[RMDB]
RNA sequence: GGGAACGACUCGAGUAGAGUCGAAAAGCAGUCUAUGUAAGAGAUUGCGCUUAUCCUAAAGGUGUCAGACGUGAGGCGGAGCCUCGUUAAAAAUCCUAUCUGACAAGCGUUUAGUUCGGAUGAGCCGUUGUGGAGAUAGUUUCGACUAUCUCCACAAAAAAGAAACAACAACAACAAC
Reactivity to 2A3 in 0.01 (KOAc 150mM, MgCl2 10mM, bicine 150mM(pH8.5), 24C), signal-to-noise 5, nucleotides 027 to 126: g000c000a010g010u000c020u050a100u250g250u260a190a020g040a000g000a130u000u000g010c020g000c000u010u020a000u010c000c010u010a050a030a010g150g020u050g000u000c000a000g000a030c040g180u220g070a010g000g010c170g030g000a010g030c000c000u010c020g040u040u000a000a010a000a000a000u010c020c060u120a050u000c000u000g000a000c000a020a010g100c030g060u070u120u100a130g040u110u090c020g000g010a010u000g000a010g010c020c050g100
Reactivity to DMS in 0.01 (KOAc 150mM, MgCl2 10mM, bicine 150mM(pH8.5), 24C), signal-to-noise 5, nucleotides 027 to 126: g010c000a010g000u000c000u000a070u030g030u030a160a140g010a030g000a010u000u000g000c000g000c030u000u010a010u000c000c000u000a030a040a060g010g010u000g010u000c010a010g000a020c060g020u040g000a000g010g010c190g000g000a040g030c000c000u000c000g000u010u050a000a010a020a020a010u000c010c010u010a040u000c010u000g000a000c000a030a060g000c060g020u000u010u010a090g010u010u030c240g000g010a030u000g010a020g000c010c140g020